[RMDB]
RNA sequence: GGGAACGACUCGAGUAGAGUCGAAAACAUCGCGACUUCGGUCGCGAUGAAAGUUGUGCUCCCUCACGCAUAACAAAUCCCAAUGAGGGUAGGUGACUGGAAAACGACACGCCUUCGGGCGUGUCAAAAACUCUUAUUACUUCGGUAAUAAGAGUUUAAAAGAAACAACAACAACAAC
Reactivity to DMS in 0.01 (KOAc 150mM, MgCl2 10mM, bicine 150mM(pH8.5), 24C), signal-to-noise 3, nucleotides 027 to 126: c000a000u000c000g020c000g010a020c000u000u010c170g010g010u000c000g030c000g000a000u000g000a030a060a080g010u000u000g020u000g000c000u000c050c010c010u000c020a120c170g010c000a020u000a020a030c040a070a120a140u000c000c000c000a090a050u000g010a020g000g010g010u010a040g000g020u000g010a120c050u010g010g000a050a060a130a120c150g000a010c000a000c000g000c000c000u000u010c180g020g000g010c000g000u010g000u000c000a000a020

This 177-nucleotide RNA was probed chemically with DMS. Reactivities are given for positions 27 through 126. Conditions: 150 mM KOAc, 10 mM MgCl2 and 150 mM bicine (pH 8.5), 24 C. For DMS the reverse transcriptase was MarathonRT.